An RNA of 170 nucleotides, treated with 2A3 and DMS and read out base by base. The RNA was probed in 150 mM KOAc, 10 mM MgCl2 and 150 mM bicine (pH 8.5) at 24 C. Values cover nucleotides 27 to 129.
RNA sequence: GGGAACGACUCGAGUAGAGUCGAAAAUCAUAUGACGAGAGGGGAUGAGCUGGUAAAGAGGGGUGGAACGUCGGGUGGAAGCACUCCCAAGAAGAGCAGAGAGAAGGCAAGAAUCGGACGAUUUCCCGUAGUACGGUCUUCGGACCGUACAAAAGAAACAACAACAACAAC
Reactivity to 2A3 in 0.01 (KOAc 150mM, MgCl2 10mM, bicine 150mM(pH8.5), 24C), signal-to-noise 4, nucleotides 027 to 129: u060c000a020u060a080u240g060a020c050g030a030g000a040g010g000g020g000a050u020g020a010g000c030u020g020g050u090a050a060a010g040a030g000g000g000g010u050g030g020a050a010c060g110u080c020g040g020g010u020g040g020a020a010g010c010a020c040u040c020c020c010a000a010g040a020a000g020a010g040c070a010g030a010g000a010g010a050a070g000g020c050a030a000g020a040a020u070c030g010g010a010c040g020a040u010u030u000c000c000c000g010u000a050
Reactivity to DMS in 0.01 (KOAc 150mM, MgCl2 10mM, bicine 150mM(pH8.5), 24C), signal-to-noise 5, nucleotides 027 to 129: u060c060a080u050a130u050g000a100c100g030a070g010a050g000g070g000g020a050u000g000a080g030c070u070g000g000u050a040a070a110g030a060g020g010g070g000u010g020g010a000a040c110g060u060c070g000g060g070u060g030g000a080a090g000c140a010c080u000c000c030c070a100a050g010a070a040g020a030g020c040a080g000a120g010a000g010a050a050g000g040c120a030a030g020a050a060u060c040g030g030a100c150g000a090u000u000u000c000c000c000g000u010a010